An RNA of 177 nucleotides, treated with DMS and 2A3 and read out base by base. For 2A3 the reverse transcriptase was SuperScript II with manganese. Source: RMDB library OK2TST, as collected in RNAgym. For DMS the reverse transcriptase was MarathonRT.
RNA sequence: GGGAACGACUCGAGUAGAGUCGAAAAGUCCUCCACCUCUGGUGCGUUCUCGAGGAGGACAUCACGGUUCUCCCACGGAAUGGACACGUCCUUCCGGAGUCUGUUCUUUCGAAUGAAUGCGUGGGUGCAACCCCGAUUGUUUCGACAAUCGGGGUUGAAAAGAAACAACAACAACAAC
Reactivity to DMS in 0.01 (KOAc 150mM, MgCl2 10mM, bicine 150mM(pH8.5), 24C), signal-to-noise 3, nucleotides 027 to 126: g010u000c010c010u000c100c000a080c040c020u020c160u000g020g010u000g020c050g010u000u000c000u020c020g020a200g030g010a030g010g010a010c010a050u000c180a100c200g000g000u000u000c020u000c000c020c100a200c120g000g000a030a010u010g010g010a030c030a120c290g000u020c050c070u010u010c100c060g000g000a080g000u000c040u010g020u000u000c020u010u000u000c040g020a080a060u010g000a060a030u000g000c020g000u010g000g000g010u000g010
Reactivity to 2A3 in 0.01 (KOAc 150mM, MgCl2 10mM, bicine 150mM(pH8.5), 24C), signal-to-noise 3, nucleotides 027 to 126: g030u060c030c010u030c010c000a020c010c030u100c100u170g260g060u130g070c000g030u020u010c040u010c020g080a110g000g000a000g000g000a010c000a010u180c090a030c080g110g000u020u030c010u020c040c020c010a070c040g040g010a030a050u130g000g040a030c070a040c150g070u060c050c000u110u050c020c050g020g000a040g000u000c030u100g020u020u000c000u030u070u060c040g070a190a140u130g010a040a020u050g040c020g000u070g000g020g000u080g010